[RMDB]
RNA sequence: GGGAACGACUCGAGUAGAGUCGAAAACGAGCCUCGUUCGCGAGGCUCGAAAGGCGGCGAAAGCUCGACUAAAUGUCGAAAGUGUAACGCCUAUCCCACACAAAAGGCUGCCGUUCGCGGCAGCCAACGAUAUUUGAUUCUUCGGAAUCAAAUAUCGAAAAGAAACAACAACAACAAC
Reactivity to DMS in 0.01 (KOAc 150mM, MgCl2 10mM, bicine 150mM(pH8.5), 24C), signal-to-noise 2, nucleotides 027 to 126: c010g000a020g040c000c000u010c010g050u010u000c170g010c020g020a020g020g040c020u000c020g000a000a060a020g000g000c010g000g030c090g000a070a070a250g010c090u000c000g000a020c010u000a120a100a160u020g000u000c000g000a020a060a080g010u000g000u010a050a110c030g000c010c000u000a070u020c000c000c000a080c300a090c230a020a030a080a100g020g000c000u020g020c000c040g010u000u000c290g010c000g010g020c000a010g010c000c020a000a020
Reactivity to 2A3 in 0.01 (KOAc 150mM, MgCl2 10mM, bicine 150mM(pH8.5), 24C), signal-to-noise 2, nucleotides 027 to 126: c010g000a000g000c020c000u020c010g000u060u050c080g010c030g120a000g000g000c000u000c000g000a010a000a000g000g000c030g030g040c080g120a130a030a010g030c000u010c000g000a000c020u120a300a090a130u290g000u000c000g010a080a040a110g080u080g040u110a100a020c000g000c010c000u000a040u030c030c030c000a020c010a000c010a010a130a000a000g010g000c000u000g000c020c000g020u040u080c240g000c040g070g000c000a010g010c000c000a000a000